[RMDB]
RNA sequence: GGGAACGACUCGAGUAGAGUCGAAAAGUUGCGUUGAAUUUUGAAUUGUUCUCUCAAGUUAGCAGGCAGGUGCACUUUUCUCUUUUACGAAGGACUUCGAGUGCACUGGGGUCAGCAUAGAUACUUGUUCAUUUUACCGGUUCGCCGGUAAAAUGAAAAAAGAAACAACAACAACAAC
Reactivity to DMS in 0.01 (KOAc 150mM, MgCl2 10mM, bicine 150mM(pH8.5), 24C), signal-to-noise 1, nucleotides 027 to 126: g030u000u000g000c240g000u010u000g040a060a150u040u050u000u010g000a120a090u000u090g010u000u070c080u020c000u040c000a000a060g000u000u040a060g000c090a070g070g000c050a250g040g000u000g020c000a020c000u010u000u030u150c300u020c000u000u050u000u000a160c250g010a030a040g000g000a050c300u040u000c300g040a010g000u000g000c000a070c000u000g000g000g000g010u000c000a040g080c040a270u010a090g000a050u020a000c030u000u000g000